[RMDB]
RNA sequence: GGGAACGACUCGAGUAGAGUCGAAAAUGAGAAAAACACGCUUCACAAUGUGCGGCAAAGAAACAUUGUUUAUGCAAAGGCACUUCGCAAUGUGUGCUCAAACAUUGCUUAUUCAAACACGCUUCACAAAAGAAUCAGUGGUUCGCCACUGAUUCAAGGUAUAUAGCGAGUUCGCUCGCUAUAUACCAAAAGAAACAACAACAACAAC
Reactivity to DMS in 0.01 (KOAc 150mM, MgCl2 10mM, bicine 150mM(pH8.5), 24C), signal-to-noise 2, nucleotides 027 to 156: u000g000a220g000a040a070a060a110a100c110a010c010g030c020u000u010c050a040c020a010a030u000g110u000g070c000g010g010c040a100a050a070g040a030a050a030c020a010u000u000g040u000u010u020a050u020g000c000a090a220a090g010g010c000a050c030u000u000c040g000c120a150a070u000g050u000g040u000g020c010u000c050a020a160a030c030a050u000u000g010c010u000u000a100u000u000c050a090a090a130c080a080c100g000c000u000u010c030a090c130a060a140a110a180g000a020a010u000c000a010g020u000g030g040u000u010c300g000c010c000a020c000u000g000a010u020u000c000a000a000
Reactivity to 2A3 in 0.01 (KOAc 150mM, MgCl2 10mM, bicine 150mM(pH8.5), 24C), signal-to-noise 9, nucleotides 027 to 156: u120g000a020g100a060a020a010a010a010c030a010c040g010c000u010u010c000a000c000a020a000u010g000u000g000c010g040g030c140a130a070a030g070a020a050a000c010a000u000u000g100u060u110u110a130u130g050c060a050a080a070g160g000c010a000c030u030u030c040g000c010a000a010u010g000u000g030u010g030c080u100c150a030a050a010c000a000u010u000g000c000u060u110a130u150u130c100a060a110a040c050a020c110g120c080u120u120c100a040c050a130a100a060a040g000a000a010u000c000a000g000u010g030g040u040u040c180g050c060c000a000c000u000g000a000u000u000c000a000a000